[RMDB]
RNA sequence: GGGAACGACUCGAGUAGAGUCGAAAAACCCACUUGCGCUGGGUAUCGGGCCUUGACAUGAACGUACUGAAGCGCGCACGGUAUGGUUCAACAGCAAGGUCUCUAGCGUGUACCUGUGCUGAAGCGCGCACGGCAACCGAAAGGUGCGGUGGUAAUCGCAUCAAAAAUCGUUCGCGAUUUUUGAUGCAAAAGAAACAACAACAACAAC
Reactivity to 2A3 in 0.01 (KOAc 150mM, MgCl2 10mM, bicine 150mM(pH8.5), 24C), signal-to-noise 2, nucleotides 027 to 156: a010c010c010c000a030c030u110u180g010c020g010c040u110g000g040g020u090a040u130c060g010g000g000c010c000u000u020g030a140c020a150u070g000a000a000c010g000u030a010c010u060g040a170a060g010c000g010c000g030c040a030c050g010g000u030a040u100g220g070u020u020c020a140a120c020a190g120c000a000a000g010g020u000c010u000c010u060a100g080c030g070u170g010u080a050c000c000u080g040u120g030c020u070g020a080a020g010c010g000c010g000c010a010c020g060g000c040a100a250c040c010g090a140a040a020g030g020u010g010c040g010g000u070g010g100u180a140a050u150c160

This 207-nucleotide RNA was probed chemically with 2A3.
The RNA was probed in 150 mM KOAc, 10 mM MgCl2 and 150 mM bicine (pH 8.5) at 24 C.
The data come from the RNA Mapping Database (RMDB), library RNAMAK.
Values cover nucleotides 27 to 156.